[RMDB]
RNA sequence: GGGAACGACUCGAGUAGAGUCGAAAAGUCAUGCCUUCGGGCAUGACAGGUACCGAGAGGUACCAAAUAGCGUACAGGAGACACAGACUGUACGCUAAAAAAGUGUGUGUUCAAUAAGUACCAAUUGAACACACACUAAAAUGGUGCAAGUGUGUCAAUUAAUUAGGGGUUUCGACCCCUAAUUAAUAAAAGAAACAACAACAACAAC
Reactivity to DMS in 0.01 (KOAc 150mM, MgCl2 10mM, bicine 150mM(pH8.5), 24C), signal-to-noise 1, nucleotides 027 to 156: g010u000c000a010u010g000c010c010u000u010c300g050g040g040c000a000u000g010a000c010a040g060g000u000a010c030c020g010a300g020a300g040g000u000a020c000c000a040a050a110u010a020g020c010g020u000a040c010a020g000g050a090g020a020c020a010c010a030g010a120c000u000g020u000a010c000g010c010u000a000a020a010a110a020a030g050u000g010u000g030u010g000u000u000c000a000a000u000a040a140g020u010a100c170c100a020a060u000u010g000a050a010c020a010c010a000c010a000c000u000a010a060a080a080u000g020g000u000g000c030a040a070g050u020g020u000g000u000c030a300
Reactivity to 2A3 in 0.01 (KOAc 150mM, MgCl2 10mM, bicine 150mM(pH8.5), 24C), signal-to-noise 2, nucleotides 027 to 156: g040u000c000a000u000g000c000c000u050u100c280g020g000g000c010a000u000g000a000c010a000g010g000u000a000c010c010g000a020g010a030g090g000u000a000c000c000a030a040a020u040a000g000c000g000u000a000c000a010g010g030a050g010a050c010a010c000a020g080a030c000u000g000u000a010c000g000c000u000a000a020a000a000a020a010g000u000g000u000g000u000g000u000u000c000a000a020u100a170a020g150u100a150c080c050a020a020u000u000g000a000a000c000a000c000a000c000a000c000u000a000a010a000a040u110g070g000u150g060c100a080a040g040u020g000u000g000u050c010a000
An RNA of 207 nucleotides, treated with DMS and 2A3 and read out base by base. Source: RMDB library OK3TST, as collected in RNAgym. Conditions: 150 mM KOAc, 10 mM MgCl2 and 150 mM bicine (pH 8.5), 24 C. 2A3 adducts were read by reverse transcription with SuperScript II with manganese.